[RMDB]
RNA sequence: GGGAACGACUCGAGUAGAGUCGAAAAGAUCAAUUAUGAUUGCAAUGUAAUAUGUCAAGGCAGACAUAGCUAGCUGUCGCCUUAGCUAGAGAUAGCCGAUUUAUUGCUUUCAUAAGAACGGCAAGAAGCACCGUAGUAUCUUCGGAUACUACGGUGCAAAAGAAACAACAACAACAAC
Reactivity to DMS in 0.01 (KOAc 150mM, MgCl2 10mM, bicine 150mM(pH8.5), 24C), signal-to-noise 1, nucleotides 027 to 126: g050a150u000c140a000a150u010u000a000u000g010a030u000u000g010c000a000a020u000g020u050a000a010u000a090u000g020u000c210a070a000g000g000c030a130g000a030c100a020u010a160g000c050u050a060g080c160u030g000u000c070g000c020c070u000u000a020g000c020u010a030g050a210g000a180u000a030g000c000c030g010a070u000u000u000a010u030u000g000c010u000u000u000c000a000u000a000a010g000a070a060c120g000g000c070a130a130g000a100a100
Reactivity to 2A3 in 0.01 (KOAc 150mM, MgCl2 10mM, bicine 150mM(pH8.5), 24C), signal-to-noise 1, nucleotides 027 to 126: g100a110u140c070a040a060u010u000a010u010g010a000u010u010g000c010a000a040u010g050u190a020a060u110a060u230g110u080c130a020a080g040g040c050a060g030a030c000a000u040a040g140c070u050a020g010c030u000g010u040c000g050c010c020u050u020a030g000c010u020a000g010a000g030a090u050a020g020c030c020g010a010u030u020u000a040u020u000g010c000u000u050u000c010a030u000a020a000g070a070a010c080g090g000c060a120a020g090a150a010